RNA sequence: GGGAACGACUCGAGUAGAGUCGAAAAGAGAGCGCCGCGGCAGCCCCGGGGACCUUCUGCCGCGGGUGCGACGAGUGCGACCGCGCCUGGCACGCUCACGAUGCCGGUUUUGUGGAUCUGUACACCGCUCCUCUUAGGAGUUCGCUCCUAAGAGGAGAAAAGAAACAACAACAACAAC
Reactivity to DMS in 0.01 (KOAc 150mM, MgCl2 10mM, bicine 150mM(pH8.5), 24C), signal-to-noise 2, nucleotides 027 to 126: g020a090g030a170g000c030g000c050c000g040c000g000g000c020a010g000c100c030c070c060g000g000g000g040a090c090c050u000u000c000u010g010c000c000g000c030g020g010g040u020g010c000g030a090c090g000a120g020u010g010c000g000a080c000c030g020c020g020c040c010u030g000g010c010a100c030g050c130u030c140a090c110g010a130u050g020c000c010g000g010u000u000u040u000g080u030g000g000a090u020c030u010g020u000a050c050a080c130c060g000
Reactivity to 2A3 in 0.01 (KOAc 150mM, MgCl2 10mM, bicine 150mM(pH8.5), 24C), signal-to-noise 4, nucleotides 027 to 126: g070a000g010a010g010c040g000c030c000g010c020g010g000c010a010g030c000c010c000c050g010g000g000g110a070c030c050u100u080c000u030g020c000c000g000c020g000g030g010u060g000c010g030a090c030g060a020g040u040g010c000g000a010c010c020g030c010g010c010c030u050g010g030c020a020c030g040c050u090c030a120c070g070a090u030g030c030c000g010g040u080u100u130u170g030u020g010g050a160u010c030u100g000u030a020c030a030c040c020g010

The record gives the reactivity of an RNA of 177 nucleotides to DMS and 2A3. 2A3 adducts were read by reverse transcription with SuperScript II with manganese. Conditions: 150 mM KOAc, 10 mM MgCl2 and 150 mM bicine (pH 8.5), 24 C. It was measured as part of the RMDB library OK1LIB. The 2A3 profile rests on 3,395 reads.